An RNA of 177 nucleotides, treated with DMS and 2A3 and read out base by base. For DMS, 100,757 sequencing reads were counted. For 2A3 the reverse transcriptase was SuperScript II with manganese. It was measured as part of the RMDB library OK1LIB.
RNA sequence: GGGAACGACUCGAGUAGAGUCGAAAAGAUCAGGGUUUCGCGUGUCGUAUUCGUCCUGCGAUGGCGUGAUAUUGUAGGGGACAAUGGACGUCAGUGCAACAUCACGGCGCGGGCUCUUUUCGGUGGUUCUUUUUUCAUGGUUCGUCGUGAAAGAGGGAAAAGAAACAACAACAACAAC
Reactivity to DMS in 0.01 (KOAc 150mM, MgCl2 10mM, bicine 150mM(pH8.5), 24C), signal-to-noise 9, nucleotides 027 to 126: g000a040u010c040a040g010g010g010u000u010u030c020g000c020g020u010g010u020c010g020u000a090u020u020c110g000u010c090c080u010g010c020g000a050u010g000g020c010g010u000g000a070u010a040u000u000g010u010a100g020g010g010g010a300c020a050a090u020g010g010a080c080g000u000c010a030g020u010g000c020a040a040c100a040u010c090a020c020g000g000c010g010c000g000g000g000c010u000c010u000u000u000u000c010g000g020u000g000g010u010
Reactivity to 2A3 in 0.01 (KOAc 150mM, MgCl2 10mM, bicine 150mM(pH8.5), 24C), signal-to-noise 6, nucleotides 027 to 126: g020a020u030c010a000g020g010g010u010u100u160c010g000c010g000u060g030u080c010g000u040a040u060u080c050g020u050c020c030u030g010c010g040a050u050g060g040c010g000u010g050a110u010a010u020u020g030u030a040g010g070g020g010a010c000a020a030u050g030g040a000c010g000u000c010a010g030u010g050c020a030a010c000a020u050c010a000c010g010g000c000g000c000g000g010g000c000u000c000u010u000u000u010c010g020g010u030g030g000u030